[RMDB]
RNA sequence: GGGAACGACUCGAGUAGAGUCGAAAAAGGGUGUCUACUGUGAGGUGGAAUCUGAAGGAAGCUGUAAGCGAAUCUCUGGUCCGACGGACAGAAAUCGCAUAUAAGGCUAGGCUUCGAGUGAUAAGCUGGCAAAGAACAGUGAAGUCUAAUAACUACCGCCUGUAAUAGUGUUCGCACUAUUACAGGCAAAAGAAACAACAACAACAAC
Reactivity to DMS in 0.01 (KOAc 150mM, MgCl2 10mM, bicine 150mM(pH8.5), 24C), signal-to-noise 1, nucleotides 027 to 156: a030g040g020g030u030g000u020c030u030a030c060u010g030u000g000a130g000g020u010g000g000a060a050u010c070u000g030a110a090g000g000a100a070g030c000u000g000u000a090a210g010c020g020a070a090u000c010u010c000u010g020g030u010c000c000g000a140c260g000g010a140c010a050g000a010a010a030u000c000g000c000a090u000a050u010a070a170g010g030c030u010a070g010g000c040u010u030c020g010a110g050u010g000a090u000a030a170g010c020u030g000g040c050a130a090a120g000a100a030c150a050g030u020g000a050a090g020u010c030u020a070a100u010a030a100c050u000a050c050c040
Reactivity to 2A3 in 0.01 (KOAc 150mM, MgCl2 10mM, bicine 150mM(pH8.5), 24C), signal-to-noise 2, nucleotides 027 to 156: a000g060g010g000u070g030u040c040u010a070c030u060g040u040g080a030g010g020u030g020g020a050a070u010c080u090g030a020a000g030g040a020a010g010c040u040g050u200a110a030g020c010g010a020a080u040c020u000c010u100g090g110u000c000c010g150a070c150g060g010a000c000a000g010a000a050a010u020c010g000c010a000u040a010u020a170a040g030g000c020u010a030g060g000c000u000u000c020g040a030g020u050g020a080u030a170a030g010c030u030g030g000c050a130a070a030g060a150a010c000a010g010u020g090a040a010g010u000c030u090a030a110u060a080a080c040u100a070c020c080